[RMDB]
RNA sequence: GGGAACGACUCGAGUAGAGUCGAAAAAAACUAUCGUGCAUGGGCUGCUGCUUCGAAAGAAGAAGCAUUCUUACAUAUGAAAUUCUAUGAAUCUGAUUCAGUUUAUGAACUUCCAACUGAAGUUGAACACUUACUCUGUGUUCGCACAGAGUAAGUGAAAAGAAACAACAACAACAAC
Reactivity to 2A3 in 0.01 (KOAc 150mM, MgCl2 10mM, bicine 150mM(pH8.5), 24C), signal-to-noise 1, nucleotides 027 to 126: a000a000a000c060u040a060u040c040g000u040g000c050a090u030g000g060g000c000u050g010c000u010g000c000u060u000c030g150a250a080a080g020a040a010g000a000a000g000c000a010u040u070c000u040u110a040c000a020u120a080u090g060a060a120a080u130u050c040u100a180u090g060a070a040u090c050u070g020a100u090u050c020a000g000u050u030u140a160u160g020a070a040c030u070u050c070c050a010a040c100u120g000a050a080g050u030u100g040a100a010
Reactivity to DMS in 0.01 (KOAc 150mM, MgCl2 10mM, bicine 150mM(pH8.5), 24C), signal-to-noise 2, nucleotides 027 to 126: a060a040a020c080u000a050u000c080g020u010g010c070a040u010g000g000g000c140u010g010c010u010g020c010u010u000c000g000a130a060a120g000a020a010g010a040a010g030c030a050u000u010c010u000u000a070c010a030u000a060u010g010a080a040a050u000u000c060u010a090u000g010a040a060u000c090u000g010a100u000u000c080a040g010u000u000u000a100u000g010a060a020c070u000u000c090c100a090a050c180u000g000a030a050g000u000u000g000a050a140